[RMDB]
RNA sequence: GGGAACGACUCGAGUAGAGUCGAAAAUCUAACUCAUUCGUGAGUUAGAGUGAGCGCAGCGACCAUUGGGCCGGUGGCGCGCUCUCGGUGCCGCGCGUGGCGAUAGUGCUUGCUUCGGCAAGCACAAGAGAUGAUUUUUAUUCGUAAAAAUCAUCUCAAAAGAAACAACAACAACAAC
Reactivity to 2A3 in 0.01 (KOAc 150mM, MgCl2 10mM, bicine 150mM(pH8.5), 24C), signal-to-noise 6, nucleotides 027 to 126: u000c000u000a000a000c010u010c010a030u070u070c170g100u030g030a010g010u000u000a000g000a010g020u070g010a010g000c020g000c050a190g010c060g100a040c010c000a040u040u090g060g080g020c050c040g020g020u040g080g010c010g000c010g010c000u000c000u010c030g030g060u090g030c010c010g040c020g020c060g130u140g020g010c030g010a080u130a100g010u010g000c000u010u010g000c000u030u040c150g080g000c000a010a000g010c000a000c000a000a000
Reactivity to DMS in 0.01 (KOAc 150mM, MgCl2 10mM, bicine 150mM(pH8.5), 24C), signal-to-noise 6, nucleotides 027 to 126: u000c000u000a000a000c000u000c000a050u000u020c180g030u000g010a020g000u000u000a000g010a030g010u010g000a040g020c010g020c010a120g030c010g000a030c010c010a140u000u000g010g010g020c300c180g000g010u010g010g030c010g000c010g000c010u000c010u000c050g010g010u000g000c030c010g010c150g010c120g020u010g010g020c040g000a090u010a080g010u000g000c000u000u010g000c000u000u010c200g020g000c000a000a010g000c000a000c000a040a080
Structure probing data (2A3 and DMS) for a 177-nucleotide construct. DMS adducts were read by reverse transcription with MarathonRT. It was measured as part of the RMDB library M2PK50. The reactions ran in a buffer of 150 mM KOAc, 10 mM MgCl2 and 150 mM bicine (pH 8.5), at 24 C.